[RMDB]
RNA sequence: GGGAACGACUCGAGUAGAGUCGAAAACAAAAACGGAUUGUGUCUGUAAUCACAACAAACAAAAACAAAAGGAUUGUGUCCUUAAUCACAAAAACAAAACAAAAUGGAUUGUGUCCGUAAUCACAAAAGGUCCUAAUACGUUCGCGUAUUAGGACCUAAAAGAAACAACAACAACAAC
Reactivity to 2A3 in 0.01 (KOAc 150mM, MgCl2 10mM, bicine 150mM(pH8.5), 24C), signal-to-noise 1, nucleotides 027 to 126: c000a040a090a070a000a000c000g000g030a080u030u070g000u000g030u030c100u010g130u290a000a080u170c000a000c000a000a030c000a000a300a000c160a070a140a000a000a000c010a000a180a010a000g000g000a030u000u000g040u000g050u050c000c000u090u170a000a140u230c000a000c000a000a000a020a160a020c050a050a030a010a040c090a040a110a000a110u090g010g110a050u060u020g040u000g000u000c000c000g110u140a090a100u170c000a000c000a000a000a000
The record gives the reactivity of an RNA of 177 nucleotides to 2A3. The data come from the RNA Mapping Database (RMDB), library OK1LIB. The RNA was probed in 150 mM KOAc, 10 mM MgCl2 and 150 mM bicine (pH 8.5) at 24 C. Values cover nucleotides 27 to 126.